[RMDB]
This 207-nucleotide RNA was probed chemically with 2A3. As a SHAPE reagent, 2A3 marks flexible, mostly unpaired nucleotides at the ribose 2'-OH.

RNA sequence: GGGAACGACUCGAGUAGAGUCGAAAAUUGCCGAUCGGUAUGGAUGCCACCGUGACGGCUCAUUCACACAAGUGCCAACGAUAACGAGGCGCUCGCUAUUGCUGCGUAACUGACGGCCUGACGGUCUAAAACAGAUUCGUGUUCGCACGAAUCUGAAGACAUGAGGGAACUUCGGUUCCCUCAUGUCAAAAGAAACAACAACAACAAC
Reactivity to 2A3 in 0.01 (KOAc 150mM, MgCl2 10mM, bicine 150mM(pH8.5), 24C), signal-to-noise 1, nucleotides 027 to 156: u030u010g050c030c040g070a070u040c020g030g000u030a060u120g200g140a130u180g120c060c070a010c030c000g050u010g120a060c080g000g000c000u060c000a040u090u130c040a000c090a010c020a170a030g020u010g080c000c000a200a000c070g050a070u060a150a060c070g000a020g110g000c070g090c100u020c030g000c000u080a080u110u300g000c100u010g000c010g030u080a050a030c030u000g070a010c040g000g030c000c060u080g070a040c080g010g000u000c040u080a040a040a010a030c010a000g000a000u000u000c000g000u010g000u030u040c130g020c050a000c000g000a000a000u000c000u030g000a000a000

For 2A3 the reverse transcriptase was SuperScript II with manganese.